Structure probing data (2A3 and DMS) for a 177-nucleotide construct. DMS (dimethyl sulfate) methylates the pairing face of unpaired adenines and cytosines. DMS adducts were read by reverse transcription with MarathonRT. The RNA was probed in 150 mM KOAc, 10 mM MgCl2 and 150 mM bicine (pH 8.5) at 24 C.

[RMDB]
RNA sequence: GGGAACGACUCGAGUAGAGUCGAAAAUCGAGGAUUUUGCCUGCUUUGUUUACGUAGAUUACGUACAAAAUCUAUCAACACAAGUCGUUACUGCAACAUUGGCACGAUGGGCCUGUUACCGACGUCAUCGAUGAGUCGGUUUCGACCGACUCAUCGAAAAAGAAACAACAACAACAAC
Reactivity to 2A3 in 0.01 (KOAc 150mM, MgCl2 10mM, bicine 150mM(pH8.5), 24C), signal-to-noise 1, nucleotides 027 to 126: u060c060g000a050g130g040a050u050u040u070u030g020c000c010u000g030c030u070u110u160g080u070u100u030a000c000g000u000a130g030a300u030u180a040c060g050u010a060c000a000a120a000a030u090c060u040a180u060c050a070a070c040a010c010a160a050g000u000c030g020u020u040a060c030u040g040c010a030a080c040a110u040u130g080g000c020a020c100g070a040u020g070g050g000c010c000u020g060u080u080a040c000c010g000a060c020g100u050c050a060
Reactivity to DMS in 0.01 (KOAc 150mM, MgCl2 10mM, bicine 150mM(pH8.5), 24C), signal-to-noise 2, nucleotides 027 to 126: u000c080g010a140g020g000a120u000u000u010u000g000c020c030u070g020c130u010u010u000g000u000u000u020a040c160g060u000a060g000a150u040u000a050c060g010u000a120c170a050a010a060a050u010c010u000a070u000c030a140a100c210a050c180a030a030g010u000c010g000u000u000a080c090u000g000c060a090a050c110a110u000u000g000g030c100a060c070g000a110u000g050g000g030c000c050u000g000u020u000a060c090c080g020a120c120g000u000c060a090